[RMDB]
RNA sequence: GGGAACGACUCGAGUAGAGUCGAAAACUGAUGGCGGGGAGGCCGGAGCCGGGCGUCUCCGCCAGGUCGCCGAGAACGCGUUCGGCAAGGUCAAGCUGGCCGCGGCGGCGGCCGGGAUUGCGGCUGGCGCGGUGCUAAUGCAGGGGAUUGGCACGGCCGGUAUGAAGUGAUUCGUCACUUCAUACCGAAAAGAAACAACAACAACAAC
Reactivity to 2A3 in 0.01 (KOAc 150mM, MgCl2 10mM, bicine 150mM(pH8.5), 24C), signal-to-noise 1, nucleotides 027 to 156: c020u080g030a020u090g030g010c000g020g000g020g000a010g010g030c000c030g040g000a030g050c050c050g020g030g000c060g280u000c000u010c010c000g010c000c000a000g020g000u020c000g000c000c020g020a060g030a120a040c000g020c010g010u060u090c020g000g000c020a050a050g140g010u170c030a000a060g000c010u010g000g000c010c010g020c010g090g030c050g020g000c020g000g020c000c030g000g020g000a070u040u070g020c020g040g000c010u030g010g020c210g000c020g180g040u040g010c010u040a020a030u060g030c070a050g060g000g000g000a030u020u020g000g030c030a000c040g050g000c010
The record gives the reactivity of an RNA of 207 nucleotides to 2A3.
The RNA was probed in 150 mM KOAc, 10 mM MgCl2 and 150 mM bicine (pH 8.5) at 24 C.